[RMDB]
RNA sequence: GGGAACGACUCGAGUAGAGUCGAAAAGAUAUGGAUACUAACAGCUUCAACAGCUUACGUCGGAAACGACGUAAGACAUGAAGGUUAUGUAUCCUAAGUCAAAGGGGGGUAGUUCGCUACCCCCCAACUUAACCCUAAAGUUCGCUUUAGGGUUAAGAAAAGAAACAACAACAACAAC
Reactivity to DMS in 0.01 (KOAc 150mM, MgCl2 10mM, bicine 150mM(pH8.5), 24C), signal-to-noise 6, nucleotides 027 to 126: g010a040u000a260u010g000g000a020u000a010c010u000a020a020c040a300g030c100u000u000c060a090a100c300a190g000c000u000u000a000c000g010u000c000g020g010a060a060a150c010g010a000c000g000u000a000a000g000a030c080a220u010g010a030a030g020g000u000u000a020u010g010u000a000u000c000c000u000a030a130g010u000c020a090a110a140g010g000g000g010g020g010u000a010g010u000u010c290g010c000u000a010c000c000c000c000c000c000a000a000
Reactivity to 2A3 in 0.01 (KOAc 150mM, MgCl2 10mM, bicine 150mM(pH8.5), 24C), signal-to-noise 3, nucleotides 027 to 126: g010a010u050a010u100g010g000a020u000a000c010u010a010a010c020a140g300c060u160u110c130a220a150c020a130g030c000u010u020a000c000g000u000c000g000g000a040a020a040c010g000a010c010g010u010a000a000g000a000c000a090u300g060a030a010g040g010u000u020a110u300g010u000a010u000c000c000u010a030a020g010u020c020a040a120a240g000g010g000g030g000g010u000a000g010u020u030c130g000c070u000a000c000c000c000c000c000c000a000a000

Chemical mapping of a 177-nucleotide RNA with DMS and 2A3. The DMS profile rests on 9,591 reads. For DMS the reverse transcriptase was MarathonRT. Values cover nucleotides 27 to 126.